RNA sequence: GGGAACGACUCGAGUAGAGUCGAAAAAAGUCUCGCAGGCAACGGCGUUGACCUGGGUGCCGCGAUUGAAGUGGCCGGCACCUUCGCGCUUGAAACGCAGCGGCGCGUUCCAGACGACGGCCCCUUCGAGGAUUUCGAGCUUCGGCUCGAAAUCCUCAAAAGAAACAACAACAACAAC
Reactivity to 2A3 in 0.01 (KOAc 150mM, MgCl2 10mM, bicine 150mM(pH8.5), 24C), signal-to-noise 1, nucleotides 027 to 126: a000a000g140u120c040u050c040g040c030a080g030g000c040a000a000c050g150g070c140g010u000u030g240a300c000c000u040g010g000g000u010g040c000c000g040c060g100a070u230u080g020a200a000g020u020g020g020c040c000g000g030c000a060c080c000u020u000c010g030c000g010c050u230u240g040a150a180a090c180g000c080a110g170c030g020g000c000g020c000g010u070u000c040c010a000g000a040c060g010a000c040g080g030c000c000c010c000u020u000c140